Chemical mapping of a 177-nucleotide RNA with 2A3 and DMS.
Reactivities are rounded to 0.1 and cut off at 0 and 3.
2A3 adducts were read by reverse transcription with SuperScript II with manganese.
The reactions ran in a buffer of 150 mM KOAc, 10 mM MgCl2 and 150 mM bicine (pH 8.5), at 24 C.

[RMDB]
RNA sequence: GGGAACGACUCGAGUAGAGUCGAAAAGGAUCGCCCUUCAUUUAUGGGGAGCAUUUUUUCUGUAUGAUCGCAUUGCCUCCACAACAAUGUACCGAGGCAAAGUCUUCACUGAAGGGAACAUAGCAGCGGAGACCUAUCUGUUCGCAGAUAGGUCUCCAAAAGAAACAACAACAACAAC
Reactivity to 2A3 in 0.01 (KOAc 150mM, MgCl2 10mM, bicine 150mM(pH8.5), 24C), signal-to-noise 2, nucleotides 027 to 126: g160g030a060u060c030g070c020c010c010u000u000c000a040u040u040u300a200u100g000g030g000g000a010g000c010a030u000u000u000u070u300u040c170u130g120u000a270u060g090a050u040c050g050c060a070u000u000g000c000c000u080c060c020a050c000a270a000c010a000a120u190g020u120a060c100c030g000a010g000g000c000a010a010a010g000u070c010u030u020c010a010c050u100g070a000a090g000g000g040a040a000c010a090u170a040g160c130a000g040c020
Reactivity to DMS in 0.01 (KOAc 150mM, MgCl2 10mM, bicine 150mM(pH8.5), 24C), signal-to-noise 1, nucleotides 027 to 126: g010g000a210u000c130g000c000c000c000u000u130c020a180u000u000u020a090u000g000g000g000g000a010g000c300a000u000u000u000u060u020u000c010u020g020u080a040u000g000a000u040c210g110c020a050u000u050g000c000c000u000c000c080a060c090a150a040c280a150a010u010g000u000a110c300c300g000a010g010g000c000a010a000a000g020u000c000u010u130c000a080c140u050g000a040a000g000g000g000a160a050c110a070u000a080g000c240a000g030c040

Values cover nucleotides 27 to 126.